[RMDB]
RNA sequence: GGGAACGACUCGAGUAGAGUCGAAAACACACUGGGGGUAUGAGCUCAGGGCGAUAUUGUUGGGAUUUACUUAGAAGUGCAAUAUUCGCAUUCCAAAGUUCCUGGAAUAUACAAAGACCGGAAAAAAACGUGUGACUAAAUUCGUUUAGUCACACGUAAAAGAAACAACAACAACAAC
Reactivity to DMS in 0.01 (KOAc 150mM, MgCl2 10mM, bicine 150mM(pH8.5), 24C), signal-to-noise 2, nucleotides 027 to 126: c110a110c100a100c050u010g000g000g020g010g000u000a090u000g000a110g010c020u000c010a070g020g010g010c050g010a060u000a000u000u000g000u000u000g010g000g010a170u000u010u010a100c090u000u000a180g010a040a060g030u000g030c020a040a130u010a150u010u000c130g020c020a030u010u010c020c000a070a080a060g000u000u010c000c020u010g020g000a050a010u010a050u030a080c170a070a100a090g000a220c030c050g000g010a000a020a070a040a050a090
Reactivity to 2A3 in 0.01 (KOAc 150mM, MgCl2 10mM, bicine 150mM(pH8.5), 24C), signal-to-noise 1, nucleotides 027 to 126: c090a010c000a030c020u000g010g000g010g020g060u240a130u130g060a040g020c010u020c020a000g050g090g030c040g020a010u030a020u060u000g080u010u070g100g000g040a080u060u110u040a030c030u050u050a030g050a110a030g080u000g040c010a050a000u020a080u160u300c020g000c010a030u070u000c010c010a120a030a000g050u000u000c000c000u000g040g040a040a000u080a030u020a150c050a060a070a000g060a160c020c040g000g120a070a020a000a020a000a000

Record summary:
Conditions: 150 mM KOAc, 10 mM MgCl2 and 150 mM bicine (pH 8.5), 24 C. Structure probing data (DMS and 2A3) for a 177-nucleotide construct. The 2A3 profile rests on 796 reads. For DMS, 1,260 sequencing reads were counted. Source: RMDB library OK2TRN, as collected in RNAgym.